RNA sequence: GGGAACGACUCGAGUAGAGUCGAAAAUCGCGUUGGCUGCCUAAUUCAAGGAAUUAGAGUGCCUUCAUGCUAAGGGUUUGAUAUCUGCUAAAACCCGGUGCAUUCAUCAAUGCAGGUUAAGCCAAAGAAACGGCUCACGAAUUCGUUCGUGAGCCAAUCAACUCAUUAGGUUCGCCUAAUGAGUUGAAAAAGAAACAACAACAACAAC
Reactivity to 2A3 in 0.01 (KOAc 150mM, MgCl2 10mM, bicine 150mM(pH8.5), 24C), signal-to-noise 3, nucleotides 027 to 156: u050c040g000c040g030u030u010g000g020c010u090g090c020c000u020a020a000u030u020c160a230a140g210g030a110a040u000u010a030g050a010g090u030g000c000c000u020u030c070a050u060g000c000u020a020a020g010g010g000u000u010u000g010a010u030a050u120c030u050g020c010u040a020a050a000a030c000c000c000g020g000u020g010c010a070u030u210c050a090u080c100a150a110u210g000c010a010g000g060u090u160a100a100g000c040c010a100a070a040g040a030a130a020c120g000g000c000u010c000a000c000g040a050a040u120u100c140g020u070u000c000g000u070g060a000g000c000c010a000a000
Reactivity to DMS in 0.01 (KOAc 150mM, MgCl2 10mM, bicine 150mM(pH8.5), 24C), signal-to-noise 2, nucleotides 027 to 156: u020c030g000c030g030u000u000g000g070c030u010g000c060c030u000a040a050u010u000c030a200a170g000g030a050a030u000u000a070g010a180g040u000g000c000c020u010u000c030a060u000g020c010u000a300a210g000g000g020u000u000u000g020a150u010a060u010c040u000g010c070u000a160a030a020a030c020c000c000g010g030u000g030c010a070u010u010c000a090u000c070a080a150u000g000c110a030g010g020u010u000a070a110g060c010c040a060a080a140g000a120a110a160c160g030g000c020u010c000a010c000g000a030a080u000u010c200g020u000u010c000g030u000g010a020g020c000c010a000a020